[RMDB]
RNA sequence: GGGAACGACUCGAGUAGAGUCGAAAAACGGAUGGUACGCCAUCCGACCAUUGGGUAGAAGCGAUCAAUCAGCACCGUGACGGUGCAGAUGGGAAAUUGCCCAUGAUACGCACCAUACGUGGUGCGAAAAAGCCAUCGGUGUUCGCACCGAUGGCAACCACAUUAGGCUGUUCGCAGCCUAAUGUGGAAAAGAAACAACAACAACAAC
Reactivity to 2A3 in 0.01 (KOAc 150mM, MgCl2 10mM, bicine 150mM(pH8.5), 24C), signal-to-noise 2, nucleotides 027 to 156: a000c000g000g000a000u010g000g010u060a030c250g030c020c000a000u000c000c000g010a010c010c010a080u110u100g030g010g000u030a030g020a110a000g050c020g060a030u160c030a110a040u020c010a000g020c010a000c000c010g160u210g290a180c280g010g000u000g000c010a010g000a000u020g040g040g000a050a300a140u060u020g000c000c000c020a000u020g030a030u030a030c010g030c000a000c000c000a010u020a070c290g120u020g000g000u010g000c000g030a050a080a000a010a000g000c000c000a000u000c000g000g000u040g020u060u070c230g000c130a000c000c000g000a000u010g000g010c000a000a000